[RMDB]
RNA sequence: GGGAACGACUCGAGUAGAGUCGAAAAAUAGUUAAGGUUGCGCUUGCCUAUUUAGGCAUACUUCUCAGGAUGGCGCGUUGCAGUCCAACAAGAUCCAGGGACUGGACAGAAUUUUCCUAUACCUCGAAAAACAUUCGCUUGUUCGCAAGCGAAUGAACAUACAGAGAGCGUUCGCGCUCUCUGUAUGAAAAGAAACAACAACAACAAC
Reactivity to DMS in 0.01 (KOAc 150mM, MgCl2 10mM, bicine 150mM(pH8.5), 24C), signal-to-noise 2, nucleotides 027 to 156: a080u000a120g000u000u010a070a140g040g000u020u000g030c020g000c070u000u010g010c020c010u000a240u000u000u020a030g010g000c010a060u000a040c070u010u000c030u020c030a130g000g010a100u010g020g030c030g010c030g000u030u000g020c000a040g010u000c020c000a070a120c040a070a110g000a170u000c020c010a100g030g010g000a090c140u000g000g000a130c010a180g010a080a090u010u000u000u000c030c020u020a180u000a070c060c040u000c070g000a060a040a150a140a180c000a010u000u010c010g010c000u000u000g020u000u000c300g030c000a000a010g020c000g030a010a000u000g000a020a060
Reactivity to 2A3 in 0.01 (KOAc 150mM, MgCl2 10mM, bicine 150mM(pH8.5), 24C), signal-to-noise 3, nucleotides 027 to 156: a000u110a020g050u080u070a170a030g040g070u110u090g000c000g020c040u060u080g020c000c000u080a190u210u240u300a020g000g000c000a010u020a080c030u070u080c060u010c050a040g080g040a060u120g030g000c020g000c000g060u000u050g120c000a000g000u000c010c010a060a030c020a220a150g050a210u080c060c060a050g010g000g020a010c010u000g000g000a000c000a000g140a110a090u090u040u020u100c010c000u050a060u030a080c000c000u070c060g040a130a080a000a000a000c020a000u000u000c000g000c000u010u000g010u090u020c230g020c080a000a010g000c000g000a000a000u000g000a010a000